[RMDB]
RNA sequence: GGGAACGACUCGAGUAGAGUCGAAAAGUGAGAAAGGCAGCGACAGUGGUGAAUGCAGGAAAAGCAGAGAAAAAGUACCGCAGUGUACCACUCAGGCGGUGCAAGUAGUCGAUGGAGUCAUUGGUAGAUAAUCCCGUCGGUUCGCCGACGGGAUUAUAAAAGAAACAACAACAACAAC
Reactivity to DMS in 0.01 (KOAc 150mM, MgCl2 10mM, bicine 150mM(pH8.5), 24C), signal-to-noise 1, nucleotides 027 to 126: g030u000g010a060g020a050a140a030g000g000c020a030g000c000g000a120c110a080g000u020g000g000u000g010a050a020u000g000c070a050g000g000a090a090a230a100g010c000a090g010a130g000a050a110a000a060a110g020u000a000c000c010g000c020a060g030u010g010u090a080c100c040a030c060u000c080a090g000g000c070g010g030u000g000c020a100a140g000u020a040g040u000c000g010a150u000g000g010a120g000u020c040a080u020u020g010g010u000a090g000
Reactivity to 2A3 in 0.01 (KOAc 150mM, MgCl2 10mM, bicine 150mM(pH8.5), 24C), signal-to-noise 1, nucleotides 027 to 126: g150u140g000a080g000a260a000a000g090g020c000a000g030c010g120a000c100a130g010u010g070g080u010g020a100a000u100g000c060a060g110g110a100a000a000a000g030c120a000g040a010g130a170a290a000a000a000g000u000a010c000c000g000c010a010g000u040g000u230a220c010c000a090c080u000c000a000g010g000c000g000g000u000g070c080a020a020g170u000a040g000u020c010g000a080u150g130g030a000g000u030c000a110u000u000g000g000u040a010g000